[RMDB]
RNA sequence: GGGAACGACUCGAGUAGAGUCGAAAAGUGGCUUUGGUUCGGGCUACGACAAUGUGUGUACAUCACCUCUGCUGCCGAGGAAAAACAAACCGGCACCAAAGUUGGUGGCCCAGCAGUCGUAUCAGAGAUUAUUAUCGACCUUCGGGUCGAUAAUAAUAAAAGAAACAACAACAACAAC
Reactivity to DMS in 0.01 (KOAc 150mM, MgCl2 10mM, bicine 150mM(pH8.5), 24C), signal-to-noise 3, nucleotides 027 to 126: g000u040g010g000c030u030u000u020g010g000u000u020c030g020g020g030c110u000a040c010g000a040c030a030a090u010g030u020g030u030g030u030a040c070a000u000c050a020c010c000u000c040u000g010c190u000g020c010c030g040a130g000g020a020a030a090a120a150c210a100a140a130c080c020g000g010c000a030c070c000a000a030a030g010u010u010g020g040u010g010g000c020c020c000a100g000c210a170g010u000c010g010u000a070u020c030a110g010a140g000
Reactivity to 2A3 in 0.01 (KOAc 150mM, MgCl2 10mM, bicine 150mM(pH8.5), 24C), signal-to-noise 3, nucleotides 027 to 126: g090u020g020g050c020u010u090u130g100g010u110u100c040g080g060g000c020u020a010c000g030a010c010a190a190u070g090u010g010u020g020u110a120c010a050u040c000a000c000c000u000c010u000g020c030u010g000c010c000g040a300g030g110a170a100a110a040a000c090a030a130a070c060c000g010g000c010a010c030c000a000a070a020g000u010u020g020g010u000g010g010c000c010c020a000g040c050a030g020u030c020g000u010a050u120c020a020g060a020g010
Chemical mapping of a 177-nucleotide RNA with DMS and 2A3. DMS adducts were read by reverse transcription with MarathonRT. The DMS profile rests on 3,709 reads. In probing experiments dimethyl sulfate is read out at A N1 and C N3, which are open when not base-paired. Values cover nucleotides 27 to 126. Conditions: 150 mM KOAc, 10 mM MgCl2 and 150 mM bicine (pH 8.5), 24 C.